[RMDB]
An RNA of 207 nucleotides, treated with 2A3 and DMS and read out base by base.
The DMS profile rests on 6,193 reads.
For DMS the reverse transcriptase was MarathonRT.
The reactions ran in a buffer of 150 mM KOAc, 10 mM MgCl2 and 150 mM bicine (pH 8.5), at 24 C.
RNA sequence: GGGAACGACUCGAGUAGAGUCGAAAAGGACCUGCUGAGGGGUCCGACAUAGCCUCAGCGUCUAGCCUGUCACUCACCAGGCGAAUCAUGUGAGUGUUGAUGCUUUUGCAUCUUAAUCUGACUGAGUCGUAGCAGUCUCAUGAACUAUGACAUUAGAAUAUAUAUCCCUGUUCGCAGGGAUAUAUAUAAAAGAAACAACAACAACAAC
Reactivity to 2A3 in 0.01 (KOAc 150mM, MgCl2 10mM, bicine 150mM(pH8.5), 24C), signal-to-noise 3, nucleotides 027 to 156: g020g000a010c020c000u030g000c000u010g010a000g050g000g000g000u000c010c000g000a000c000a070u110a020g080c000c000u000c000a010g000c010g040u100c110u070a030g000c000c000u010g040u050c010a000c010u000c010a000c000c010a000g010g010c040g030a020a070u110c030a020u080g000u000g000a000g020u010g020u020u120g000a000u000g000c030u080u220u290u300g000c000a000u000c010u020u150a140a090u120c110u110g000a010c020u000g000a000g050u000c030g000u010a010g040c000a000g020u010c060u050c170a200u240g050a080a040c000u010a010u030g000a010c000a000u060u270a070g090a110
Reactivity to DMS in 0.01 (KOAc 150mM, MgCl2 10mM, bicine 150mM(pH8.5), 24C), signal-to-noise 2, nucleotides 027 to 156: g010g000a050c000c070u010g020c040u000g010a100g040g040g020g000u000c050c030g000a080c080a110u000a240g000c010c010u000c050a050g020c010g030u000c070u000a130g000c030c000u000g020u010c060a040c010u000c000a050c050c010a040g010g000c010g000a080a070u010c160a110u010g020u000g020a050g050u000g000u010u000g000a100u000g020c010u000u010u000u000g000c010a140u000c020u000u000a080a160u000c080u020g010a170c070u000g010a150g000u000c040g030u000a050g010c000a070g000u000c090u010c130a100u000g000a090a080c010u000a010u000g000a050c010a180u010u020a070g010a140